Chemical mapping of a 177-nucleotide RNA with 2A3 and DMS.
RNA sequence: GGGAACGACUCGAGUAGAGUCGAAAACACCAGGUCAUGCGAGCGCAGCGACGCCGAUGACACCCGAUAGUCCUGGAUCAACACGUCUUCUAGCGUGUCGAGUUUGGCGGCGCGACGCACUGCCUGCCCGAAUUGAAAUGUUCGCAUUUCAAUUCGGAAAAGAAACAACAACAACAAC
Reactivity to 2A3 in 0.01 (KOAc 150mM, MgCl2 10mM, bicine 150mM(pH8.5), 24C), signal-to-noise 4, nucleotides 027 to 126: c030a020c000c020a010g010g010u110c050a010u070g020c030g160a200g010c040g000c070a130g040c080g060a060c020g000c010c010g030a030u100g020a020c020a040c030c030c030g100a110u110a050g040u050c030c060u060g050g050a100u080c030a040a060c010a010c080g060u030c040u210u000c050u130a030g010c000g030u000g000u000c020g030a110g090u050u140u180g010g000c000g010g000c010g000c010g040a070c020g000c000a020c050u030g000c000c010u030g010c010
Reactivity to DMS in 0.01 (KOAc 150mM, MgCl2 10mM, bicine 150mM(pH8.5), 24C), signal-to-noise 4, nucleotides 027 to 126: c150a180c280c000a000g010g020u000c130a110u010g010c030g010a170g020c030g000c210a130g000c060g020a140c040g000c010c010g030a070u010g000a140c170a070c040c050c040g020a090u000a080g000u010c040c060u000g000g000a120u010c060a080a070c060a030c090g000u000c100u000u020c130u010a100g010c050g020u000g000u000c010g000a080g010u000u000u010g000g020c010g010g010c020g000c010g010a110c090g030c030a080c090u000g010c000c020u000g000c100
DMS adducts were read by reverse transcription with MarathonRT.